[RMDB]
RNA sequence: GGGAACGACUCGAGUAGAGUCGAAAACAAAAUAAGGCAAAACAAACUAGAGAAACAUCCUAGGAAGAUGAAAAGAAAAGCCUUACUAUCGGCAGCGUAGAAUGCCCUACGGAUAGAAAAAGAAAAAGGGUAAUGUACUCUUCGGAGUACAUUACCCAAAAGAAACAACAACAACAAC
Reactivity to 2A3 in 0.01 (KOAc 150mM, MgCl2 10mM, bicine 150mM(pH8.5), 24C), signal-to-noise 1, nucleotides 027 to 126: c000a040a090a000a100u190a000a000g000g000c000a010a020a020a020c020a110a100a220c270u230a000g030a000g190a120a190a040c020a020u140c000c070u000a000g000g100a100a040g020a050u170g010a070a050a030a030g300a100a100a040a000g010c000c000u060u040a040c000u000a000u040c020g300g000c140a000g100c110g060u040a000g060a280a120u100g050c000c000c000u000a000c000g060g000a020u000a000g000a000a110a000a000a180g160a000a150a000a050a050
Description
The record gives the reactivity of an RNA of 177 nucleotides to 2A3. For 2A3, 427 sequencing reads were counted. Values are in units of 0.01, from 0 to 300, in steps of 10. Values cover nucleotides 27 to 126.